[RMDB]
RNA sequence: GGGAACGACUCGAGUAGAGUCGAAAAAGCAGCUCGAGUAAGGAUGGGCUCUCACACCUCCUGGAGCCAGCACCCUCCAGGAUAUUUCCAUGAGGAAAGGAUGGUGGCAGCCCUAGUGACCCAUGGGGUGAGCUUAACUUUUCGAAGUUAAGCUCACAAAAGAAACAACAACAACAAC
Reactivity to 2A3 in 0.01 (KOAc 150mM, MgCl2 10mM, bicine 150mM(pH8.5), 24C), signal-to-noise 5, nucleotides 027 to 126: a000g060c020a000g000c000u010c000g010a010g010u040a100a070g120g050a070u140g010g010g000c000u000c010u040c010a070c000a020c030c000u000c000c000u000g010g000a000g020c020c000a030g070c050a040c000c000c020u000c000c000a000g000g000a010u030a100u100u040u000c030c010a120u300g170a200g090g020a010a020a050g060g040a050u110g090g020u000g000g010c020a010g010c000c000c000u000a010g030u040g100a160c000c030c000a040u130g070g010g040
Reactivity to DMS in 0.01 (KOAc 150mM, MgCl2 10mM, bicine 150mM(pH8.5), 24C), signal-to-noise 3, nucleotides 027 to 126: a130g010c040a170g000c000u000c000g000a030g040u000a020a090g000g000a140u060g010g000g000c010u020c030u010c040a060c020a060c030c030u000c000c000u020g000g000a020g010c070c140a120g010c110a070c140c120c000u000c000c000a020g000g000a020u040a030u020u000u000c000c000a190u070g010a150g000g020a010a030a060g010g020a110u020g010g010u000g000g000c300a010g000c010c000c000u000a090g010u000g000a130c000c000c040a090u020g000g000g000